RNA sequence: GGGAACGACUCGAGUAGAGUCGAAAACCCGGCCUCGCUUUGGUGACUCUAGAUAACCUCGGGCCGAUCGCGCGCCCUCGCGGCGGCGACGGUUCAUUCGAAUGUCUGCCCUAUCAACUUUCGAUGGUAGGUCCGUCGCCUACCAUGGUGACCACGGCAACACCAGUUACUUCGGUAACUGGUGUUGAAAAGAAACAACAACAACAAC
Reactivity to 2A3 in 0.01 (KOAc 150mM, MgCl2 10mM, bicine 150mM(pH8.5), 24C), signal-to-noise 1, nucleotides 027 to 156: c000c010c000g060g010c010c000u040c030g060c050u130u040u120g000g000u060g030a000c010u000c040u110a030g010a050u050a130a110c000c020u030c010g010g000g010c000c010g000a090u030c000g030c020g020c030g020c020c020c040u150c160g090c230g010g000c000g010g000c020g000a000c000g000g090u030u080c050a060u100u030c040g030a060a010u090g010u000c050u040g020c010c010c020u150a120u240c070a070a030c020u080u110u100c040g110a000u000g000g020u010a010g070g000u100c080c110g100u110c050g000c000c010u030a000c000c010a020u020g090g000u010g010a060c050c040a060c070g080g020